[RMDB]
RNA sequence: GGGAACGACUCGAGUAGAGUCGAAAAAGCUGUACAGACAUAACGUGAUACGCACCUAUCACGAUCACCAGUGCGCCAGCCACCUUUUGCAAGAGUUGAGCCGCUUGGCUACUGAGAUUUUGCAAAAGGGGAUCAUUUUAUUCGUAAAAUGAUCCCCAAAAGAAACAACAACAACAAC
Reactivity to 2A3 in 0.01 (KOAc 150mM, MgCl2 10mM, bicine 150mM(pH8.5), 24C), signal-to-noise 2, nucleotides 027 to 126: a030g040c060u070g020u120a040c040a090g060a010c010a080u150a150a060c020g040u000g030a010u010a010c120g040c110a060c020c010u010a000u000c010a000c020g040a070u080c070a050c050c000a000g020u040g060c070g040c010c020a030g000c020c010a090c010c020u020u050u030u020g000c020a030a020g000a050g070u070u150g070a000g060c000c020g120c220u120u230g000g000c010u110a050c020u040g050a050g060a180u060u030u000u030g000c000a000a000a040a040
Reactivity to DMS in 0.01 (KOAc 150mM, MgCl2 10mM, bicine 150mM(pH8.5), 24C), signal-to-noise 1, nucleotides 027 to 126: a110g000c030u000g000u040a060c050a050g000a090c110a110u010a070a100c000g010u000g000a020u000a050c100g000c120a040c210c130u010a000u000c000a030c010g020a060u000c090a030c080c070a110g000u000g000c050g000c100c020a060g000c010c010a130c020c020u020u010u010u000g010c000a000a020g010a020g010u000u010g000a040g000c000c010g050c300u010u010g030g010c000u000a040c110u010g000a110g000a110u000u000u000u000g000c050a000a020a030a030
About this RNA
Chemical mapping of a 177-nucleotide RNA with 2A3 and DMS. 2A3 adducts were read by reverse transcription with SuperScript II with manganese. Conditions: 150 mM KOAc, 10 mM MgCl2 and 150 mM bicine (pH 8.5), 24 C.